[RMDB]
RNA sequence: GGGAACGACUCGAGUAGAGUCGAAAAUCAGGAUGCUGUGAACAACAAUGCACAGGCUCUAUCCAAAUUAGCUAGCGAGCUAUCUAAUACUUUUGGUGCUAUUUCCGCCUCUAUUGGAGACAUCAUAGAGGCUCUACAAAUUCGUUUGUAGAGCCUCAAAAGAAACAACAACAACAAC
Reactivity to DMS in 0.01 (KOAc 150mM, MgCl2 10mM, bicine 150mM(pH8.5), 24C), signal-to-noise 2, nucleotides 027 to 126: u060c110a180g040g020a070u000g010c030u000g000u020g000a080a080c240a080a070c130a090a080u020g000c000a000c090a000g000g000c030u010c080u020a080u000c040c000a100a120a070u000u030a030g010c060u000a010g020c020g060a190g020c010u020a000u060c080u030a040a030u000a070c090u000u080u040u000g000g060u010g020c010u000a130u000u020u000c040c030g010c030c060u000c000u000a070u030u040g000g020a260g000a110c070a070u030c110a040u030a130
Reactivity to 2A3 in 0.01 (KOAc 150mM, MgCl2 10mM, bicine 150mM(pH8.5), 24C), signal-to-noise 5, nucleotides 027 to 126: u080c050a040g050g020a060u070g020c000u010g020u040g010a050a030c040a050a040c040a150a180u200g030c020a010c010a020g070g000c020u010c030u070a060u000c000c020a040a040a090u110u060a080g030c040u020a010g060c040g150a020g070c020u010a060u000c030u070a050a070u070a250c070u100u110u060u090g000g010u050g040c040u070a090u110u080u030c030c010g020c030c010u030c010u030a140u060u100g050g000a030g040a040c010a050u080c020a020u100a150

The data come from the RNA Mapping Database (RMDB), library OK1LIB. Structure probing data (DMS and 2A3) for a 177-nucleotide construct. 2A3 adducts were read by reverse transcription with SuperScript II with manganese. DMS adducts were read by reverse transcription with MarathonRT. Conditions: 150 mM KOAc, 10 mM MgCl2 and 150 mM bicine (pH 8.5), 24 C. The 2A3 profile rests on 3,459 reads.